[RMDB]
RNA sequence: GGGAACGACUCGAGUAGAGUCGAAAAAUUCACUGCUAACAAAAUUGUUGGUGGUGCUCCUACAUGGUUUAAUGCGUUGCGUGACUUUACGUUAAAGGGUUAUGUUCUUGCUACCAUUAUUGUGUUUACACCCCGCAGUUCGCUGCGGGGAAAAGAAACAACAACAACAAC
Reactivity to 2A3 in 0.01 (KOAc 150mM, MgCl2 10mM, bicine 150mM(pH8.5), 24C), signal-to-noise 3, nucleotides 027 to 129: a000u080u110c000a000c010u000g010c060u000a000a000c020a110a090a060a300u270u160g000u000u020g000g000u040g040g000u000g050c010u000c000c000u030a040c060a030u110g000g150u090u040u150a130a000u100g020c120g050u020u020g000c000g020u030g020a000c000u000u020u020a010c000g190u050u170a100a100a060g160g000g000u040u120a100u010g000u000u030c030u000u050g020c040u050a010c020c000a000u020u010a030u100u100g010u000g100u030u060u040a100c060a110
Reactivity to DMS in 0.01 (KOAc 150mM, MgCl2 10mM, bicine 150mM(pH8.5), 24C), signal-to-noise 3, nucleotides 027 to 129: a140u030u020c000a040c000u060g000c000u030a000a070c040a120a180a090a280u060u100g030u020u030g050g000u020g020g020u040g030c270u050c040c020u000a000c120a040u030g030g020u020u000u040a050a100u020g040c160g020u060u040g020c000g010u000g020a020c000u000u000u040a040c040g060u030u050a120a060a170g070g010g100u060u000a120u070g000u000u070c020u050u040g030c010u010a070c000c020a070u030u030a180u000u040g030u050g010u130u000u000a150c070a080

The record gives the reactivity of an RNA of 170 nucleotides to 2A3 and DMS. DMS (dimethyl sulfate) methylates the pairing face of unpaired adenines and cytosines. The data come from the RNA Mapping Database (RMDB), library 15KLIB. The reactions ran in a buffer of 150 mM KOAc, 10 mM MgCl2 and 150 mM bicine (pH 8.5), at 24 C. High 2A3 reactivity points to a flexible backbone, as in loops and unpaired stretches. 2A3 adducts were read by reverse transcription with SuperScript II with manganese. Values cover nucleotides 27 to 129.